[RMDB]
RNA sequence: GGGAACGACUCGAGUAGAGUCGAAAACGUUGUCAUCGACAACACCCUAUGCAUUCAUGCUCUGUAAGGAUGCGCCGAAAGGUGAGCAAGCCCGAGUUGCCCAGACGUGAAAUGCAACACUUUAGAGAAAACCCGAAGCAGUUCGCUGCUUCGGGAACUUCCUGAAUAACUUCGGUUAUUCAGGAAGAAAAGAAACAACAACAACAAC
Reactivity to DMS in 0.01 (KOAc 150mM, MgCl2 10mM, bicine 150mM(pH8.5), 24C), signal-to-noise 1, nucleotides 027 to 156: c060g100u000u000g000u030c020a220u020c110g000a060c000a060a080c020a170c000c020c020u000a120u000g010c070a050u020u000c030a190u000g000c070u040c020u000g020u000a230a100g030g020a140u000g040c040g050c060c000g000a070a080a230g020g050u010g020a040g020c000a150a300g020c020c020c020g000a100g020u010u000g000c020c020c000a100g040a020c020g050u000g020a040a110a090u000g000c040a020a230c050a020c040u000u060u030a170g010a220g010a140a060a050a150c000c000c000g000a060a050g080c000a010g020u000u010c260g000c000u000g050c000u010u010c000g010g040g010a000a000
Reactivity to 2A3 in 0.01 (KOAc 150mM, MgCl2 10mM, bicine 150mM(pH8.5), 24C), signal-to-noise 3, nucleotides 027 to 156: c080g000u010u010g010u030c090a270u130c300g000a000c000a010a000c010a080c000c010c000u060a100u080g000c010a000u010u020c010a020u040g010c060u030c010u010g070u070a040a010g010g020a050u020g010c000g020c000c000g060a090a010a000g010g000u050g050a070g010c010a020a020g020c000c000c050g110a110g090u180u180g120c010c030c000a000g010a010c020g030u040g050a080a030a040u040g000c000a050a040c010a020c050u180u210u250a140g050a010g040a130a080a030a020c000c000c000g000a000a000g000c000a000g000u080u140c160g040c120u010g010c000u000u010c000g000g010g000a000a000